[RMDB]
RNA sequence: GGGAACGACUCGAGUAGAGUCGAAAAGGCGUCUUCGCUGCCUCGGCCGCCAUGCACUGACCGGUAGCCGCCGUAAUGGCGGCAUUGUUCCCAUAAAAGGAUGUGGGUGUGGGUGACGAAGUAGCAGACCUACCCUAUAUUUCGAUAUAGGGUAGGUAAAAGAAACAACAACAACAAC
Reactivity to DMS in 0.01 (KOAc 150mM, MgCl2 10mM, bicine 150mM(pH8.5), 24C), signal-to-noise 9, nucleotides 027 to 126: g010g010c070g010u000c040u000u000c100g020c010u000g020c030c010u000c040g010g010c070c020g010c030c020a070u000g010c040a060c040u000g000a100c060c040g000g010u010a130g020c010c010g020c000c010g010u010a120a080u020g010g010c000g010g010c000a000u000u000g010u000u000c010c000c010a130u010a060a060a110a110g000g000a130u000g010u010g010g000g030u000g020u010g010g000g010u000g010a080c040g000a040a040g010u000a060g010c050a180g010
Reactivity to 2A3 in 0.01 (KOAc 150mM, MgCl2 10mM, bicine 150mM(pH8.5), 24C), signal-to-noise 7, nucleotides 027 to 126: g090g030c050g080u050c060u110u080c070g010c020u020g020c000c010u010c020g040g000c070c000g010c010c010a130u090g010c010a030c070u100g090a050c030c020g040g020u050a040g010c020c010g000c010c000g020u100a070a120u210g000g000c000g000g000c000a000u000u050g000u020u010c000c000c000a020u120a020a120a010a010g130g030a080u130g040u110g140g010g030u020g020u050g020g020g000u010g010a020c010g010a020a010g010u030a010g000c010a010g030